Chemical mapping of a 207-nucleotide RNA with 2A3 and DMS. The data come from the RNA Mapping Database (RMDB), library OK3TST. The RNA was probed in 150 mM KOAc, 10 mM MgCl2 and 150 mM bicine (pH 8.5) at 24 C.
[RMDB]
RNA sequence: GGGAACGACUCGAGUAGAGUCGAAAAAGUUUGUCAUAUAUACUAGCUACAUGGAAUUCAGCAAGUUAUUUAUCUCCUUGAACCUAUCUUUUCUCUGUAAGUAGGAAUGAUUUUACUUACUGUAAGGAUCACAGAGAUGGGAUAAUGCACGUAAAAAGUAUAGGUGAGGAUUCGUCCUCACCUAUACAAAAGAAACAACAACAACAAC
Reactivity to 2A3 in 0.01 (KOAc 150mM, MgCl2 10mM, bicine 150mM(pH8.5), 24C), signal-to-noise 2, nucleotides 027 to 156: a000g030u070u130u110g030u060c040a030u060a020u050a020u040a220c020u030a010g030c010u060a060c040a090u130g060g080a090a100u110u050c030a040g000c010a070a000g040u050u040a060u060u150u030a050u050c030u000c030c000u010u050g050a060a050c000c010u010a030u120c000u020u030u060u000c040u010c010u030g020u040a050a010g010u030a010g010g080a080a090u120g120a100u040u080u100u060a020c000u020u010a000c000u010g050u040a050a050g040g010a030u070c040a000c000a120g010a020g010a050u050g000g030g010a000u020a070a040u120g050c050a000c070g030u080a010a040a000a010a060
Reactivity to DMS in 0.01 (KOAc 150mM, MgCl2 10mM, bicine 150mM(pH8.5), 24C), signal-to-noise 2, nucleotides 027 to 156: a120g030u000u000u010g030u000c010a120u000a110u000a140u010a100c050u000a100g020c030u010a100c100a060u000g000g030a140a190u000u010c060a090g010c080a040a050g020u000u000a040u000u010u000a040u010c020u000c020c000u000u010g040a090a110c030c070u000a050u000c020u000u000u000u010c090u000c100u010g030u010a010a030g000u000a020g020g010a060a090u030g010a210u000u000u000u000a080c020u000u000a040c020u020g020u010a120a130g010g010a030u000c060a070c060a060g010a110g010a070u000g020g020g000a070u000a030a060u000g000c080a060c060g000u000a070a070a080a110a260